RNA sequence: GGGAACGACUCGAGUAGAGUCGAAAACCACGCAUGUUGAAAAAUGCGGGGAUGAGGUGUGGGUAGGGGUGAAAUGCCAAUCGAACUCGGAAAUAGCUGGUUCUCCCCGAAAUAGCUUUAGGGCUAGCUCUUAAUAUGGGUUCGCCCAUAUUAAGAGAAAAGAAACAACAACAACAAC
Reactivity to DMS in 0.01 (KOAc 150mM, MgCl2 10mM, bicine 150mM(pH8.5), 24C), signal-to-noise 5, nucleotides 027 to 126: c010c010a130c060g020c010a010u000g010u000u010g000a030a120a110a190a020u000g000c010g000g010g000g000a150u010g010a140g000g010u000g010u010g000g000g000u010a110g010g000g000g010u000g010a020a030a070u010g000c060c070a050a090u000c070g000a030a080c070u000c060g000g000a060a080a090u010a060g010c040u000g000g000u000u000c040u000c020c010c010c030g000a030a080a090u000a020g010c020u000u000u000a110g010g000g000c020u000a030g000
Reactivity to 2A3 in 0.01 (KOAc 150mM, MgCl2 10mM, bicine 150mM(pH8.5), 24C), signal-to-noise 4, nucleotides 027 to 126: c000c000a000c000g010c010a030u080g060u190u300g220a090a120a020a020a030u040g000c030g000g000g000g020a080u160g070a020g000g110u300g020u300g260g000g090u180a140g040g010g000g020u070g020a020a100a030u110g020c030c000a020a020u080c040g020a040a040c020u020c090g000g040a040a100a100u100a060g050c040u020g090g000u040u000c040u050c020c030c000c000g020a020a040a040u040a010g000c010u070u110u170a170g020g030g020c010u000a010g010